[RMDB]
RNA sequence: GGGAACGACUCGAGUAGAGUCGAAAAAGAGACUAAAUGGCAGUGGGCCAACUUGUUGGCUUAAGAUAUAGUCCGUCCCAGCUGAAAGGCUGUCUGCUAGAGGAAGACCUUUCUAGGUCUGAGAGCUAGUAGAGGGUAGGAGAAGUCUCUCCUACCUCACAACUUGUAUGUUCGCAUACAAGUUGUGAAAAGAAACAACAACAACAAC
Reactivity to 2A3 in 0.01 (KOAc 150mM, MgCl2 10mM, bicine 150mM(pH8.5), 24C), signal-to-noise 5, nucleotides 027 to 156: a000g130a010g000a010c020u030a070a050a140u180g130g040c100a100g110u120g020g010g010c010c010a010a020c070u140u220g050u100u010g040g000c000u040u040a070a020g030a010u090a020u020a140g000u000c010c010g030u020c010c000c000a000g000c020u050g050a060a040a020g030g000c010u020g060u030c010u010g000c000u000a000g010a000g030g040a040a010g000a000c010c000u090u300u110c200u300a020g010g010u000c000u010g010a030g000a010g040c000u000a000g000u010a010g010a030g000g000g000u000a000g000g020a000g020a090a100g210u040c070u010c000u010c110c010u000a000c000c000u010
Reactivity to DMS in 0.01 (KOAc 150mM, MgCl2 10mM, bicine 150mM(pH8.5), 24C), signal-to-noise 2, nucleotides 027 to 156: a150g000a090g040a060c010u000a040a060a160u020g020g030c070a180g030u000g010g040g020c000c000a030a030c080u000u010g010u000u000g010g020c020u000u000a060a140g020a140u000a090u000a050g010u010c000c000g010u000c000c010c010a110g000c050u000g010a100a120a140g020g030c000u000g020u000c010u000g030c010u000a060g020a090g010g010a300a030g020a000c000c020u000u000u000c180u010a050g020g010u010c000u000g010a280g000a170g000c000u000a050g010u000a020g000a070g020g000g010u000a000g000g010a030g020a070a300g010u010c110u000c000u000c000c000u000a020c010c000u000